[RMDB]
RNA sequence: GGGAACGACUCGAGUAGAGUCGAAAAGAAAUAACAGAACUUCCAAAAGAUACUAAAUAUCUUGCAUGGUCUCUGAUAGAUUAUGAUGCAAUACCAGUUUGCGGAUUUGCAUGGAUUCAUUGGAGCGCUGAGCACAUCUAUUCGUAGAUGUGCUCAGAAAAGAAACAACAACAACAAC
Reactivity to 2A3 in 0.01 (KOAc 150mM, MgCl2 10mM, bicine 150mM(pH8.5), 24C), signal-to-noise 2, nucleotides 027 to 126: g010a000a020a000u170a080a030c070a000g050a110a060c040u070u000c010c000a000a210a110a000g020a000u040a030c000u170a100a090a260u080a030u000c000u000u040g000c020a060u060g090g070u040c010u050c010u020g010a020u040a120g020a020u020u040a080u300g090a000u010g010c000a010a060u070a260c000c010a050g110u100u300u300g130c110g060g000a030u050u030u030g000c010a000u040g140g110a020u050u000c010a000u060u030g000g010a000g000c000g000
Reactivity to DMS in 0.01 (KOAc 150mM, MgCl2 10mM, bicine 150mM(pH8.5), 24C), signal-to-noise 2, nucleotides 027 to 126: g020a050a100a130u000a070a080c090a060g020a080a170c090u000u000c020c020a060a080a030a040g000a020u000a050c050u030a060a090a300u000a030u000c010u000u000g010c180a120u010g010g000u010c050u000c000u010g000a030u000a030g010a030u000u010a020u020g010a050u010g000c000a020a010u000a300c070c010a110g020u000u000u010g020c200g040g000a300u000u000u000g010c030a000u040g020g000a030u000u000c050a040u000u020g000g000a030g000c130g010
This 177-nucleotide RNA was probed chemically with 2A3 and DMS. The DMS profile rests on 1,131 reads. 2A3 adducts were read by reverse transcription with SuperScript II with manganese. Values cover nucleotides 27 to 126. DMS adducts were read by reverse transcription with MarathonRT.